Chemical mapping of a 177-nucleotide RNA with 2A3 and DMS.
[RMDB]
RNA sequence: GGGAACGACUCGAGUAGAGUCGAAAACGGUCUCAAGCUCAUAAGCAUCGCCCAGCUCAUCGACUACCGGAGGAGGCAGGAGAAACUGGUCCGAAGAGAGGCCGAGGCCUUCCUCCCCACGAAGUGGCAAAGCCAUCACAUUCGUGUGAUGGCUUUGAAAAGAAACAACAACAACAAC
Reactivity to 2A3 in 0.01 (KOAc 150mM, MgCl2 10mM, bicine 150mM(pH8.5), 24C), signal-to-noise 2, nucleotides 027 to 126: c020g020g080u040c010u020c020a060a040g030c000u050c070a100u100a240a030g060c020a070u040c020g020c020c020c010a040g010c010u020c040a100u050c070g110a100c030u060a070c030c050g030g000a090g050g010a030g020g010c050a030g020g050a060g100a080a150a020c040u060g000g000u000c010c010g040a190a050g110a060g040a080g120g010c000c000g010a030g010g050c000c000u020u000c000c000u000c030c010c010c000a050c050g110a140a040g070u110g070g000
Reactivity to DMS in 0.01 (KOAc 150mM, MgCl2 10mM, bicine 150mM(pH8.5), 24C), signal-to-noise 5, nucleotides 027 to 126: c100g010g010u000c020u010c040a090a110g030c060u010c130a080u010a100a080g010c030a090u000c060g010c140c010c030a100g000c050u000c090a090u000c070g000a120c050u010a080c100c030g000g010a070g030g000a040g000g000c040a040g010g010a100g010a090a110a160c050u000g000g020u000c010c010g010a100a130g000a160g010a100g000g020c020c020g010a060g000g010c010c010u000u000c000c000u000c010c010c000c010a050c050g010a080a070g010u000g000g010
2A3 adducts were read by reverse transcription with SuperScript II with manganese. The data come from the RNA Mapping Database (RMDB), library OK2TST.